[RMDB]
RNA sequence: GGGAACGACUCGAGUAGAGUCGAAAAGGACUGCGCAGUCCGGCAACAUCAGCAGAGAGCCCGCUAUACGUGACGGAUUGGCCGAAGCGUACAGAAAUAUUGAGCCUCCUGCAAGAGGCAGCCAAGCAAAACGUACGUGAGUUCGCUCACGUACGAAGUCUUAUCUGUAGUUCGCUACAGAUAAGACAAAAGAAACAACAACAACAAC
Reactivity to DMS in 0.01 (KOAc 150mM, MgCl2 10mM, bicine 150mM(pH8.5), 24C), signal-to-noise 2, nucleotides 027 to 156: g020g000a040c010u010g020c020g010c110a090g030u000c020c030g000g000c040a060a050c080a140u000c040a170g000c020a100g000a090g010a120g020c000c000c000g000c020u000a050u000a000c050g010u010g000a300c010g000g000a300u020u000g000g000c000c000g020a050a300g000c020g030u010a070c010a050g000a080a050a150u010a100u000u010g000a090g000c010c020u000c010c030u000g020c080a120a150g010a080g000g020c000a030g040c030c010a060a180g000c080a080a060a120a250c000g020u000a010c000g060u040g000a030g040u010u000c300g020c010u010c000a020c000g000u010a030c000g010a020a060
Reactivity to 2A3 in 0.01 (KOAc 150mM, MgCl2 10mM, bicine 150mM(pH8.5), 24C), signal-to-noise 4, nucleotides 027 to 156: g020g010a030c040u080g020c120g020c120a040g020u000c000c000g010g010c020a080a050c020a150u100c020a020g020c040a010g080a010g000a020g090c010c010c020g000c010u040a020u010a060c030g000u030g040a000c010g070g010a110u130u160g160g040c000c000g020a020a020g000c010g010u010a010c010a030g170a070a140a010u240a100u160u170g040a040g000c000c000u020c010c030u080g040c040a070a020g000a020g020g020c030a010g040c020c010a040a010g010c050a020a020a020a070c000g000u000a000c000g000u000g000a000g010u040u100c170g020c100u000c000a000c000g000u000a000c000g000a010a000

This 207-nucleotide RNA was probed chemically with DMS and 2A3. For 2A3, 4,581 sequencing reads were counted. DMS (dimethyl sulfate) methylates the pairing face of unpaired adenines and cytosines. DMS adducts were read by reverse transcription with MarathonRT. It was measured as part of the RMDB library M2RFPK.